About this RNA
An RNA of 207 nucleotides, treated with 2A3 and DMS and read out base by base. Conditions: 150 mM KOAc, 10 mM MgCl2 and 150 mM bicine (pH 8.5), 24 C. The 2A3 profile rests on 1,879 reads.
RNA sequence: GGGAACGACUCGAGUAGAGUCGAAAACUCGCUGUUUUUGUGGCUGGCUUUCAGCGGGCUGGAGGAGCCGGGAGCGGAGGCGGAGGACCGAGCCAAAAACGUCAUCCGAGGCCGGGCGGCCCCGCUCAAAAUCUUCGUAUCUUCGGAUACGAAGAAACAAUAUGUAAUCCUUCGGGAUUACAUAUUGAAAAGAAACAACAACAACAAC
Reactivity to 2A3 in 0.01 (KOAc 150mM, MgCl2 10mM, bicine 150mM(pH8.5), 24C), signal-to-noise 2, nucleotides 027 to 156: c010u020c010g000c040u030g050u020u030u010u070u080g060u050g030g020c040u020g030g030c000u030u070u100c040a030g020c050g010g070g000c040u040g000g050a060g040g010a020g030c010c050g040g050g000a020g010c030g010g020a070g030g010c040g020g040a060g050g030a020c000c030g010a010g050c020c020a070a040a010a040a050c040g050u070c020a170u050c050c030g020a060g020g000c000c000g010g020g010c010g030g020c010c010c000c000g000c000u040c020a070a110a030a050u000c000u000u000c000g000u000a000u000c000u010u020c150g090g010a000u000a010c000g000a000a000g000a000a000a000
Reactivity to DMS in 0.01 (KOAc 150mM, MgCl2 10mM, bicine 150mM(pH8.5), 24C), signal-to-noise 1, nucleotides 027 to 156: c000u000c070g030c000u010g030u000u010u010u000u010g020u000g010g020c010u000g040g000c000u000u000u020c000a110g030c000g030g030g020c050u000g000g020a180g010g030a150g010c050c060g030g060g000a020g030c060g000g000a120g020g020c030g030g000a110g010g000a050c010c000g020a150g050c030c010a030a070a090a100a050c060g020u010c050a140u010c090c010g070a290g020g010c000c020g010g000g010c030g010g020c000c000c000c000g030c010u010c060a050a040a080a120u000c000u000u000c000g010u000a020u030c000u000u020c300g020g010a000u010a000c000g010a000a010g000a020a050a130